[RMDB]
RNA sequence: GGGAACGACUCGAGUAGAGUCGAAAAUCUUAGGAGUUCGCUCCUAAGAAAAGGGCGAGGCCGUGCCAGCUCUUCGGAGCAAUACUCGGCCAGUCACUGAGAAUGCGCUACCCUUCGGGGUAGCGAAAAUCCAUUUUAAGUUCGCUUAAAAUGGAUUAAAAGAAACAACAACAACAAC
Reactivity to DMS in 0.01 (KOAc 150mM, MgCl2 10mM, bicine 150mM(pH8.5), 24C), signal-to-noise 8, nucleotides 027 to 126: u000c000u000u000a000g010g000a020g020u000u010c250g020c000u000c000c000u000a000a010g000a010a060a110a080g000g000g000c010g000a110g010g010c000c010g010u000g000c100c110a300g010c000u000c000u010u010c190g030g010a010g010c010a070a080u010a100c080u010c000g010g010c000c000a090g010u000c020a100c070u010g000a150g000a110a130u010g010c000g000c000u000a010c000c000c000u000u010c200g020g000g000g010u000a000g010c000g000a000a020
Reactivity to 2A3 in 0.01 (KOAc 150mM, MgCl2 10mM, bicine 150mM(pH8.5), 24C), signal-to-noise 4, nucleotides 027 to 126: u010c000u010u000a000g000g000a010g020u050u060c110g100c080u010c000c000u000a000a000g000a000a010a000a010g030g000g000c020g060a220g010g010c010c000g010u000g040c030c040a040g000c010u000c000u030u050c220g100g000a000g000c000a010a010u050a090c020u010c010g020g000c020c010a000g010u020c010a020c090u070g050a030g120a240a080u180g060c000g000c000u000a000c020c000c000u010u030c190g060g000g000g000u000a000g000c000g010a000a000

Source information
Structure probing data (DMS and 2A3) for a 177-nucleotide construct. The RNA was probed in 150 mM KOAc, 10 mM MgCl2 and 150 mM bicine (pH 8.5) at 24 C. The data come from the RNA Mapping Database (RMDB), library M2PK50. Reactivities are given for positions 27 through 126.